This 207-nucleotide RNA was probed chemically with 2A3. Conditions: 150 mM KOAc, 10 mM MgCl2 and 150 mM bicine (pH 8.5), 24 C.
RNA sequence: GGGAACGACUCGAGUAGAGUCGAAAAAGCCAUACCAUUACGAUGGUAUGGCAAGUCCGUGACGGCGAUGGAUCCCGCCUGGCCGAUGCCGAACUACCGAUCUGGCUGAUGGUUCCUGCCCCGUCAAAAAACGUAAAGCACUUCGGUGCUUUACGAAGGACGUUUGAAUGUUCGCAUUCAAACGUCCAAAAGAAACAACAACAACAAC
Reactivity to 2A3 in 0.01 (KOAc 150mM, MgCl2 10mM, bicine 150mM(pH8.5), 24C), signal-to-noise 1, nucleotides 027 to 156: a030g030c010c000a000u000a000c010c010a030u120u000a070c300g090a020u010g000g000u000a000u010g000g000c000a010a010g000u000c000c010g000u020g010a010c010g000g020c130g040a040u040g000g000a010u030c030c040c020g030c060c020u050g000g010c010c000g020a010u060g120c050c050g070a110a090c070u110a090c120c000g040a060u000c050u100g000g000c020u040g020a060u190g020g030u030u030c000c000u050g050c000c020c000c000g040u000c030a000a000a000a130a000a000c020g000u000a000a000a000g020c000a000c000u010u110c180g050g000u000g030c000u000u000u000a000c000g000a030a010
2A3 adducts were read by reverse transcription with SuperScript II with manganese. The data come from the RNA Mapping Database (RMDB), library M2RFPK. Reactivities are given for positions 27 through 156.